[RMDB]
RNA sequence: GGGAACGACUCGAGUAGAGUCGAAAAGAGAUAUGAUAUGACCAGUUUUCCUUACGGUGAAACGGUUGUGAUGCUUCAGCCGACUGUUCGUGUCGAUGAUCUUGGCGACAAGGUGGAAGACUGGGGGCAGUACCAAUUCUUUCGAGAAUUGGUACUGAAAAGAAACAACAACAACAAC
Reactivity to DMS in 0.01 (KOAc 150mM, MgCl2 10mM, bicine 150mM(pH8.5), 24C), signal-to-noise 7, nucleotides 027 to 126: g010a090g010a110u010a070u010g000a130u010a060u010g010a110c020c010a030g000u000u000u000u000c000c000u000u010a090c120g010g020u010g000a060a050a140c020g020g020u000u000g010u000g020a120u010g000c130u010u010c100a090g010c060c000g010a070c030u000g010u000u000c080g020u000g010u000c010g010a090u000g010a060u000c050u000u000g000g010c180g010a080c020a110a040g010g010u000g000g010a040a050g000a040c030u000g000g000g000g010g010
Reactivity to 2A3 in 0.01 (KOAc 150mM, MgCl2 10mM, bicine 150mM(pH8.5), 24C), signal-to-noise 5, nucleotides 027 to 126: g070a000g020a020u110a090u300g090a050u110a080u300g120a100c000c010a010g010u000u000u030u020c020c020u050u110a040c020g000g050u060g050a150a070a020c020g000g030u040u010g050u060g070a180u220g060c110u190u090c020a010g000c010c000g020a040c010u040g040u070u080c050g040u030g050u070c040g020a040u090g030a050u080c030u090u120g080g030c010g010a040c010a010a040g130g030u070g030g010a050a000g010a010c000u010g000g000g010g030g030
The record gives the reactivity of an RNA of 177 nucleotides to DMS and 2A3.